[RMDB]
RNA sequence: GGGAACGACUCGAGUAGAGUCGAAAAACAGACAUUGAUUUAAAGGCAUCACUCCACGAAUCUGAAGUGGUACGGAUUUCAGGUGGAGUAUUCGUAUACGGCGCAGUAGAUUAUGGGGAGGAGAGUGCGUAAAUAGUAUAUUCGUAUACUAUUUACGAAAAGAAACAACAACAACAAC
Reactivity to DMS in 0.01 (KOAc 150mM, MgCl2 10mM, bicine 150mM(pH8.5), 24C), signal-to-noise 9, nucleotides 027 to 126: a090c090a080g010a090c130a090u020u010g000a070u010u010u010a040a100a100g000g000c060a060u010c100a080c010u000c000c010a010c000g010a070a050u030c020u000g010a060a080g020u010g010g000u020a090c100g000g000a030u010u010u010c110a070g010g020u000g000g000a020g010u000a020u020u010c080g010u010a060u020a080c090g000g010c050g010c050a050g000u020a070g000a100u020u010a050u010g010g000g000g000a070g000g000a050g000a050g010u020g000
Reactivity to 2A3 in 0.01 (KOAc 150mM, MgCl2 10mM, bicine 150mM(pH8.5), 24C), signal-to-noise 9, nucleotides 027 to 126: a000c050a010g170a020c050a080u090u110g040a090u140u200u260a090a090a020g080g000c040a040u050c040a030c020u000c010c000a000c030g030a030a050u030c020u050g050a130a030g090u100g120g040u100a050c030g030g010a010u040u080u130c070a060g100g080u030g010g030a010g020u030a030u020u030c000g020u030a040u020a090c050g020g000c030g000c030a020g030u100a010g020a040u060u090a080u230g030g010g000g000a030g010g020a040g010a010g040u070g020